[RMDB]
RNA sequence: GGGAACGACUCGAGUAGAGUCGAAAAUGGUCUGCUGCUGGAUGCGUUUGAUGGUCGCUCCCUUGGGGCCCACCACCAGUCCCACCACGCGGUAGGGUACGUAGCUCUGCAUGUUCGCAUGCAGAGCCUUAUAAGAUGCCUUCGGGCAUCUUAUAAGAAAAGAAACAACAACAACAAC
Reactivity to 2A3 in 0.01 (KOAc 150mM, MgCl2 10mM, bicine 150mM(pH8.5), 24C), signal-to-noise 2, nucleotides 027 to 126: u050g050g060u000c010u010g040c010u030g000c010u020g090g050a130u040g040c060g040u060u070u060g060a070u030g020g030u020c040g000c030u030c020c010c010u060u140g030g000g000g000c040c030c010a010c000c000a030c010c000a030g050u020c030c020c000a000c000c030a050c070g000c030g020g000u040a060g030g030g110u060a030c070g060u030a020g000c000u000c000u000g010c000a000u000g030u040u020c220g010c090a000u000g000c000a010g000a000g010c000
Reactivity to DMS in 0.01 (KOAc 150mM, MgCl2 10mM, bicine 150mM(pH8.5), 24C), signal-to-noise 4, nucleotides 027 to 126: u010g010g000u000c020u010g000c020u000g010c040u010g000g010a050u010g010c300g000u000u000u000g000a070u000g010g010u000c300g010c010u000c010c010c160u020u010g010g010g000g000c060c040c070a030c020c030a050c030c020a100g010u010c010c030c010a080c080c030a060c180g010c020g020g000u010a060g010g010g010u000a030c130g010u000a150g000c000u000c000u000g000c000a010u000g010u010u010c200g010c000a000u000g000c010a010g010a000g010c000